[RMDB]
RNA sequence: GGGAACGACUCGAGUAGAGUCGAAAACUGCAUCACCUGACCACUGAUGGCUCAACGGUAUCCGGCGGUACAACUGAAUACUUGUAGCUGCCUUUUGAGCGGGUUGGCUGCAAUCCGAAACGGAGAGAAAACCUAAUUACGUUCGCGUAAUUAGGAACUUCUCGGUGGUGUUCGCACCACCGAGAAGAAAAGAAACAACAACAACAAC
Reactivity to 2A3 in 0.01 (KOAc 150mM, MgCl2 10mM, bicine 150mM(pH8.5), 24C), signal-to-noise 1, nucleotides 027 to 156: c010u020g020c000a100u010c010a000c000c000u020g020a000c000c030a000c000u040g030a060u060g040g020c000u000c020a020a040c010g040g000u030a080u040c000c000g100g030c160g070g020u110a160c090a190a140c150u230g090a230a050u130a180c020u020u000g000u020a040g000c000u000g010c000c000u000u030u030u010g020a020g000c060g010g030g020u190u290g050g000c000u020g000c010a000a070u000c060c010g060a100a200a260c160g000g010a140g000a050g030a000a110a050a050c000c000u000a000a000u010u010a000c000g020u020u060c300g020c010g060u000a010a010u000u000a010g070g000a000a000